[RMDB]
RNA sequence: GGGAACGACUCGAGUAGAGUCGAAAAAUCUUUAAGCAGAUGGCAGGUUCACCCCGUACGGUGCGGAAUUUCGCGCUUCCGUGAAACGCGAAAAUCGGACGGUGGCUGCAAGUCGCAUCGCAAAACCUAUAGCUUGUUAGGUUCGCCUAACAAGCAAGGUACUAACAGGAUUCGUCCUGUUAGUACCAAAAGAAACAACAACAACAAC
Reactivity to 2A3 in 0.01 (KOAc 150mM, MgCl2 10mM, bicine 150mM(pH8.5), 24C), signal-to-noise 5, nucleotides 027 to 156: a000u060c040u040u130u060a110a010g010c050a050g010a070u040g070g040c050a030g060g030u100u080c030a050c020c000c000c010g020u030a020c020g000g040u030g050c060g100g040a150a180u030u030u050c040g000c000g010c040u100u020c060c080g120u100g100a080a030a010c040g000c000g030a030a020a020a050u090c000g000g020a000c020g000g110u110g060g010c090u050g010c040a010a030g050u050c030g000c040a010u000c000g000c030a040a070a050a080c030c020u120a080u100a150g000c000u000u010g000u000u000a000g020g000u030u030c150g050c020c000u000a000a000c000a000a000g000c000a000a000
Reactivity to DMS in 0.01 (KOAc 150mM, MgCl2 10mM, bicine 150mM(pH8.5), 24C), signal-to-noise 1, nucleotides 027 to 156: a060u000c050u000u000u000a100a110g010c120a080g000a050u000g000g040c030a030g010g000u000u000c070a130c010c000c000c000g050u000a050c000g010g010u000g000c040g020g020a130a250u010u010u000c000g040c020g000c020u000u000c030c230g050u000g000a030a010a000c000g010c020g020a050a020a010a100u000c030g020g000a020c000g000g000u000g010g050c080u010g030c020a050a130g010u000c050g010c020a070u020c030g000c010a060a070a090a090c030c030u010a140u010a110g000c000u000u000g000u000u000a020g040g010u000u000c300g010c030c000u020a000a020c010a000a030g000c000a010a000